The data come from the RNA Mapping Database (RMDB), libraries RFM100 and RFMREP. The record gives the reactivity of an RNA of 177 nucleotides to DMS and 2A3. The RNA was probed in 150 mM KOAc, 10 mM MgCl2 and 150 mM bicine (pH 8.5) at 24 C. Reactivities are given for positions 27 through 126.
RNA sequence: GGGAACGACUCGAGUAGAGUCGAAAAUGCUGGCCCCUUAUACCGGUGAUAUCGCCGCUGAAGGAAUCAGCAAAGCCAUGCGCGGAGGCGCAAAGUUCCUGCAUCACGGCAUUAAGCGCCAGCAACGCUAAGUGCGGAUGUUCGCAUCCGCACUUAGAAAAGAAACAACAACAACAAC
Reactivity to DMS in 0.01 (KOAc 150mM, MgCl2 10mM, bicine 150mM(pH8.5), 24C), signal-to-noise 3, nucleotides 027 to 126: u010g020c020u000g000g000c050c020c110c020u020u020a040u000a040c060c020g000g040u010g000a030u040a060u010c090g000c030c150g020c050u000g000a040a290g010g010a110a150u000c010a080g030c040a020a110a120g000c080c190a140u000g000c010g000c000g000g030a080g000g000c000g020c030a080a030a030g010u060u000c010c000u000g060c130a070u010c020a060c000g000g000c040a010u040u000a080a090g020c300g000c020c010a040g020c040a080a070c190g000
Reactivity to 2A3 in 0.01 (KOAc 150mM, MgCl2 10mM, bicine 150mM(pH8.5), 24C), signal-to-noise 3, nucleotides 027 to 126: u060g000c000u000g010g000c000c010c020c000u010u080a060u050a050c010c070g140g040u050g060a060u050a040u130c110g020c020c040g000c030u010g030a100a030g070g070a110a120u090c000a000g000c000a000a060a030g050c020c000a070u110g000c010g000c040g030g150a110g050g080c020g000c000a000a070a040g020u020u010c000c010u050g000c010a010u010c010a010c020g020g000c000a000u040u020a040a010g000c010g000c040c000a000g000c000a020a050c060g010